[RMDB]
RNA sequence: GGGAACGACUCGAGUAGAGUCGAAAAUUGGUAUUUACCGAUGAUUGUUUCGGCAUUUUCACCUGGAACAAAAUCAAUAGACGCAACAUUUUCCUGCUCGCCGAUCAACAUCUCAGUCGUCUUGAGACGUUGACUACAAGUUCGCUUGUAGUCAACGAAAAGAAACAACAACAACAAC
Reactivity to DMS in 0.01 (KOAc 150mM, MgCl2 10mM, bicine 150mM(pH8.5), 24C), signal-to-noise 4, nucleotides 027 to 126: u020u010g010g010u000a130u010u000u000a040c010c010g020a050u010g010a180u000u000g020u000u000u000c010g000g030c100a150u000u010u010u000c190a110c070c030u000g020g000a050a020c110a040a030a150a050u000c060a020a080u000a080g020a040c070g020c090a080a080c100a110u000u000u000u010c020c020u000g020c060u010c080g020c080c040g010a060u000c060a010a050c110a050u000c000u000c030a040g000u000c050g010u000c060u000u010g000a110g000a100
Reactivity to 2A3 in 0.01 (KOAc 150mM, MgCl2 10mM, bicine 150mM(pH8.5), 24C), signal-to-noise 4, nucleotides 027 to 126: u060u050g000g020u070a160u100u250u160a060c010c030g010a020u040g010a050u000u080g020u030u050u020c020g000g000c030a060u060u080u110u120c070a060c040c030u060g000g040a040a020c020a030a100a020a060u100c040a040a060u070a130g040a050c030g000c050a010a100c050a140u050u070u090u000c000c000u030g040c040u050c050g010c010c000g040a070u050c010a010a040c010a050u030c010u000c030a020g080u040c010g020u010c000u020u030g030a040g000a040

An RNA of 177 nucleotides, treated with DMS and 2A3 and read out base by base. For DMS, 3,205 sequencing reads were counted. The 2A3 profile rests on 4,187 reads. For DMS the reverse transcriptase was MarathonRT.